[RMDB]
RNA sequence: GGGAACGACUCGAGUAGAGUCGAAAAGAGGCUGACGGUUUUGCAGCUAUCAUCAGCCACGAGACUACACAACAGAUUCUAGGUGCUUAUGUUGUCGGUCCACACGCAGCAUCAUUAAUUGCAGAAACUCCCCAUUUACAUUCGUGUAAAUGGGGAGAAAAGAAACAACAACAACAAC
Reactivity to 2A3 in 0.01 (KOAc 150mM, MgCl2 10mM, bicine 150mM(pH8.5), 24C), signal-to-noise 2, nucleotides 027 to 126: g040a010g010g000c010u020g000a030c040g020g060u010u010u060u080g040c030a030g030c000u050a050u040c000a000u000c000a000g000c010c000a010c030g050a040g010a000c020u100a060c100a020c000a010a120c010a030g100a080u070u080c010u080a040g110g050u090g040c020u110u060a070u110g090u060u000g020u070c020g030g000u010c010c000a030c000a020c110g020c050a010g000c000a000u050c010a050u090u200a220a050u090u100g020c040a010g060a120a120a100
Reactivity to DMS in 0.01 (KOAc 150mM, MgCl2 10mM, bicine 150mM(pH8.5), 24C), signal-to-noise 4, nucleotides 027 to 126: g010a150g020g030c020u000g010a070c090g020g010u000u000u000u010g020c060a040g000c060u000a050u000c060a050u010c030a030g010c010c010a140c100g000a130g030a080c040u000a090c100a040c060a060a080c090a080g010a080u010u010c050u000a090g000g020u000g010c050u000u010a070u010g010u000u000g010u000c100g010g000u000c030c070a080c120a110c090g010c060a040g000c050a060u000c080a070u000u000a030a050u010u000g020c050a070g010a140a070a180

This 177-nucleotide RNA was probed chemically with 2A3 and DMS. High DMS reactivity at an A or C suggests that its Watson-Crick edge is free. DMS adducts were read by reverse transcription with MarathonRT. It was measured as part of the RMDB library OK2TST. For 2A3 the reverse transcriptase was SuperScript II with manganese. The reactions ran in a buffer of 150 mM KOAc, 10 mM MgCl2 and 150 mM bicine (pH 8.5), at 24 C. Values cover nucleotides 27 to 126. The 2A3 profile rests on 1,350 reads.